[RMDB]
RNA sequence: GGGAACGACUCGAGUAGAGUCGAAAAAUGAGAGACAGAUCUAGAUUUUGUCGAGAUCAAUACAGAUCGUUUCUCGGCGUCGGAUAGCAAUUCAGCGGCAAACCAGUGUUCUGCUGCGGCGACAUCGCGGGUAGGUGAGUUUCGACUCACCUACCCGAAAAGAAACAACAACAACAAC
Reactivity to 2A3 in 0.01 (KOAc 150mM, MgCl2 10mM, bicine 150mM(pH8.5), 24C), signal-to-noise 1, nucleotides 027 to 126: a000u060g010a000g000a010g030a010c120a140g000a020u000c010u050a080g040a300u070u080u050u110g120u160c140g000a050g040a160u050c000a000a050u140a050c150a070g020a020u010c010g000u020u010u020c010u020c050g000g060c020g000u070c010g000g050a180u050a090g000c080a040a090u100u100c000a130g050c010g100g000c080a050a050a080c020c060a080g000u040g010u160u000c070u120g000c000u000g050c070g010g000c000g020a060c020a100u180c070g050
Reactivity to DMS in 0.01 (KOAc 150mM, MgCl2 10mM, bicine 150mM(pH8.5), 24C), signal-to-noise 1, nucleotides 027 to 126: a140u010g020a030g000a060g020a010c000a130g000a010u000c010u010a190g000a100u000u000u000u000g030u010c140g010a050g000a060u000c040a060a090u010a090c160a010g020a000u000c000g000u030u000u000c010u000c040g000g020c100g060u000c030g000g010a070u000a080g020c170a030a140u010u000c030a120g000c060g010g000c030a030a070a080c070c140a140g010u000g000u010u010c100u030g020c000u000g000c060g030g000c010g010a080c040a020u010c140g050